[RMDB]
RNA sequence: GGGAACGACUCGAGUAGAGUCGAAAAGCUGGUUUUUCCAAUACCAAUUCUGCAUGUGCUAUGACAGACACUACUUUAGGUGUUUCAUCUAUGCGUUCAGAUGAUCAUUUGAAUGCUGCAGCUUGUGUAGGAGAAAAGAUUAGUUCUUUUCGAACGAACACGGGACGUAAUUCGUUACGUCCCGUGUAAAAGAAACAACAACAACAAC
Reactivity to 2A3 in 0.01 (KOAc 150mM, MgCl2 10mM, bicine 150mM(pH8.5), 24C), signal-to-noise 3, nucleotides 027 to 156: g040c100u060g020g080u060u030u000u060u120c030c000a050a040u090a080c010c020a020a080u110u070c000u010g030c010a040u050g050u030g060c040u080a040u110g050a080c060a100g080a020c010a010c050u240a050c040u070u090u240a080g000g000u030g000u030u030u020c000a030u000c030u100a080u100g050c000g080u030u050c020a000g000a030u080g010a080u110c060a060u050u000u100g030a050a040u060g030c010u030g010c020a010g020c010u030u070g010u030g000u040a000g000g070a040g050a020a050a010a000g070a010u110u100a070g050u090u030c010u030u040u020u040c090g080a100a020c040g010a020
Reactivity to DMS in 0.01 (KOAc 150mM, MgCl2 10mM, bicine 150mM(pH8.5), 24C), signal-to-noise 1, nucleotides 027 to 156: g010c040u010g000g030u000u000u000u010u000c060c080a140a240u020a090c060c070a120a150u030u000c010u000g010c060a040u010g000u000g000c000u010a140u010g000a070c130a180g010a070c030a050c010u000a090c170u020u000u000a120g020g030u010g010u000u000u010c040a060u000c070u000a100u000g030c050g060u000u010c010a050g010a030u000g000a150u010c090a140u000u000u000g000a020a090u010g010c000u000g020c050a060g010c300u000u000g040u000g020u000a010g030g010a200g010a060a030a010a030g020a100u000u010a150g020u020u000c010u020u000u000u000c070g000a090a100c110g040a080